Structure probing data (DMS and 2A3) for a 177-nucleotide construct. It was measured as part of the RMDB library RFM100. The DMS profile rests on 1,148 reads. 2A3 adducts were read by reverse transcription with SuperScript II with manganese. For DMS the reverse transcriptase was MarathonRT.
[RMDB]
RNA sequence: GGGAACGACUCGAGUAGAGUCGAAAAGCAGUCUUUAGCACAUACCAGUGGUCACAACGGUUCUUGUUAAGUUCAGAGGUGACUGAAUAAAUAGGUCCUCUCCUUUGAGCUGCGGGACAGACAGCCCGAUAGCUAGGGGCUUCGGCCCCUAGCUAUCAAAAGAAACAACAACAACAAC
Reactivity to DMS in 0.01 (KOAc 150mM, MgCl2 10mM, bicine 150mM(pH8.5), 24C), signal-to-noise 1, nucleotides 027 to 126: g080c030a070g000u000c000u000u000u020a160g010c050a030c140a210u030a080c030c000a070g080u010g000g050u000c040a050c100a080a120c200g000g000u080u000c070u000u070g050u000u020a070a000g040u000u000c000a020g010a040g000g010u010g030a010c000u000g010a050a050u000a080a060a050u000a220g010g000u000c030c260u000c070u050c000c040u000u040u000g000a110g000c050u000g020c010g000g000g070a050c120a080g040a120c160a050g000c010c040c010
Reactivity to 2A3 in 0.01 (KOAc 150mM, MgCl2 10mM, bicine 150mM(pH8.5), 24C), signal-to-noise 1, nucleotides 027 to 126: g040c030a040g020u020c050u090u170u060a050g060c040a020c000a000u130a070c000c040a030g030u000g090g010u040c010a000c020a160a060c090g060g030u130u050c000u010u050g140u120u200a040a020g000u000u020c000a000g000a020g000g070u000g020a040c000u030g050a000a060u150a040a050a000u070a010g040g000u030c000c030u070c060u040c030c000u000u030u110g030a000g020c000u000g080c010g010g010g020a010c000a020g010a020c000a010g000c000c020c020